[RMDB]
RNA sequence: GGGAACGACUCGAGUAGAGUCGAAAAAGUUUAGAUUUCGAUCUAAACUAGACCACUAAGAGCAUGACGAGUGACUACGACGCAUCUAGUAGAAUGCGCCCAGCUGUGAGCAGUUCGCUGCUCACAAUUCAUAUCACCUGUUCGCAGGUGAUAUGAAAAAAGAAACAACAACAACAAC
Reactivity to DMS in 0.01 (KOAc 150mM, MgCl2 10mM, bicine 150mM(pH8.5), 24C), signal-to-noise 5, nucleotides 027 to 126: a030g000u000u000u000a010g010a020u000u000u020c200g010a020u020c000u000a000a000a000c000u010a060g010a180c010c010a140c130u000a060a080g000a060g010c040a030u000g000a080c100g010a130g010u010g000a090c070u010a070c100g010a070c050g020c010a020u000c030u000a110g010u010a080g010a060a040u000g000c040g010c010c010c100a080g010c180u000g010u000g000a010g000c000a010g020u000u000c200g010c010u000g000c000u010c000a000c010a020a060
Reactivity to 2A3 in 0.01 (KOAc 150mM, MgCl2 10mM, bicine 150mM(pH8.5), 24C), signal-to-noise 5, nucleotides 027 to 126: a010g000u010u000u000a000g000a020u060u060u110c230g040a010u000c010u010a010a000a000c000u000a010g040a030c030c010a040c050u060a110a040g030a020g070c050a040u060g050a060c050g030a020g060u050g020a070c020u040a050c110g070a020c030g000c010a020u010c030u060a080g050u020a040g130a180a070u050g020c030g020c010c010c010a050g050c080u060g000u000g000a000g000c010a000g010u030u100c220g040c080u000g000c010u000c000a000c000a000a000